[RMDB]
RNA sequence: GGGAACGACUCGAGUAGAGUCGAAAAGAUAUGGACGUCACGAGCUGGCAUUCGGAAACGAAUGACAGCGAUGAGUACGUCCUAAGUCAAAGCCUUAGCUCAGUCGUUCGCGACUGAGCUAAGGCAAGGAUGACUAAAGGUUCGCCUUUAGUCAUCCAAAAGAAACAACAACAACAAC
Reactivity to DMS in 0.01 (KOAc 150mM, MgCl2 10mM, bicine 150mM(pH8.5), 24C), signal-to-noise 3, nucleotides 027 to 126: g000a030u010a300u000g000g000a010c000g010u010c100a160c050g010a300g010c000u000g000g000c000a010u000u000c000g000g010a090a090a170c000g000a020a000u000g010a000c000a010g020c010g010a050u010g000a180g010u010a010c000g000u010c000c000u000a010a080g020u010c030a090a090a160g000c000c000u000u000a010g000c010u000c000a000g000u000c010g020u000u010c240g030c010g000a010c000u010g000a000g010c000u000a010a000g000g000c010a000a000
Reactivity to 2A3 in 0.01 (KOAc 150mM, MgCl2 10mM, bicine 150mM(pH8.5), 24C), signal-to-noise 2, nucleotides 027 to 126: g030a020u070a040u200g010g010a000c000g010u040c100a020c120g090a060g010c000u010g000g000c000a010u000u000c020g060g020a090a040a050c010g000a000a000u010g010a020c000a010g000c000g000a030u030g020a030g040u090a010c010g000u020c000c000u020a110a010g070u010c030a080a090a030g000c000c000u000u000a000g000c000u000c000a010g000u000c000g050u090u130c300g030c010g080a000c000u010g000a000g000c020u000a000a000g000g000c010a000a000